[RMDB]
Chemical mapping of a 177-nucleotide RNA with 2A3 and DMS. It was measured as part of the RMDB libraries RFM100 and RFMREP. For DMS the reverse transcriptase was MarathonRT.
RNA sequence: GGGAACGACUCGAGUAGAGUCGAAAAGACGCCAGAUCCCACGAUCAGUUUUCGUGAAGAAUUUUUGACGGGACCAGAGGCUACCCGUAGGUGACCCGCUUACUUUUGCGGGACGCCUGCGUUGCGAUUUCGUAGAUAGAUUCGUCUAUCUACGAAAAAAAGAAACAACAACAACAAC
Reactivity to 2A3 in 0.01 (KOAc 150mM, MgCl2 10mM, bicine 150mM(pH8.5), 24C), signal-to-noise 9, nucleotides 027 to 126: g050a010c060g010c010c000a010g010a120u020c000c010c010a030c070g050a260u030c030a030g020u020u020u040u040c050g030u120g220a220a100g020a080a110u050u080u070u140u070g020a020c020g000g000g010a010c010c020a060g050a050g200g000c010u020a050c000c000c010g000u000a000g000g000u020g030a110c000c000c010g010c020u090u100a180c070u130u230u160u150g000c000g000g000g000a010c000g000c000c000u000g000c000g020u030u130g060c070g050a060
Reactivity to DMS in 0.01 (KOAc 150mM, MgCl2 10mM, bicine 150mM(pH8.5), 24C), signal-to-noise 9, nucleotides 027 to 126: g000a140c160g010c010c010a110g000a110u000c000c020c010a110c130g010a160u000c040a040g000u010u000u000u000c010g010u020g010a160a180g010a020a020u000u000u010u020u010g010a070c090g000g010g000a030c030c030a100g010a170g010g000c000u010a090c030c010c000g020u000a000g000g020u000g010a070c000c000c000g010c010u010u020a100c270u020u010u020u010g010c010g000g000g000a030c010g000c000c010u000g000c010g000u010u010g010c100g010a140